The record gives the reactivity of an RNA of 177 nucleotides to DMS and 2A3. The 2A3 profile rests on 2,462 reads. DMS adducts were read by reverse transcription with MarathonRT. The reactions ran in a buffer of 150 mM KOAc, 10 mM MgCl2 and 150 mM bicine (pH 8.5), at 24 C. It was measured as part of the RMDB library TTRDEL.

RNA sequence: GGGAACGACUCGAGUAGAGUCGAAAAGAUAUGGAAUAAUUGCCUUGGACCCAAGCUACCCACCUCGGAAACGAGAGGCUUGGCUAGGCGGAUUAUUCCUAAGUCAAAAGUCGUCUUCGGACGACAAUCUGUAUCAUUCGUUCGCGAAUGAUACAGAAAAAGAAACAACAACAACAAC
Reactivity to DMS in 0.01 (KOAc 150mM, MgCl2 10mM, bicine 150mM(pH8.5), 24C), signal-to-noise 2, nucleotides 027 to 126: g000a020u000a220u020g010g000a040a020u000a000a000u000u000g000c000c000u000u010g050g020a050c300c020c000a000a000g010c010u000a080c100c130c100a300c180c000u000c000g000g010a040a070a110c000g000a010g010a080g000g020c000u000u000g000g000c010u000a000g000g030c000g000g010a000u000u000a020u000u000c000c010u000a010a070g000u000c020a110a110a160a150g020u000c000g010u000c000u000u010c180g030g010a010c000g000a000c000a060a060
Reactivity to 2A3 in 0.01 (KOAc 150mM, MgCl2 10mM, bicine 150mM(pH8.5), 24C), signal-to-noise 2, nucleotides 027 to 126: g010a010u050a040u090g020g010a010a000u010a020a010u020u020g010c030c000u070u300g060g020a080c070c010c000a010a010g030c010u120a130c080c070c140a260c160c040u000c010g000g000a110a060a040c010g000a000g040a040g070g010c030u010u000g000g000c010u010a000g030g000c060g010g020a000u000u000a010u020u000c000c000u020a060a020g030u020c010a000a050a110a140g010u010c000g000u020c020u060u080c300g160g000a010c000g000a000c000a000a060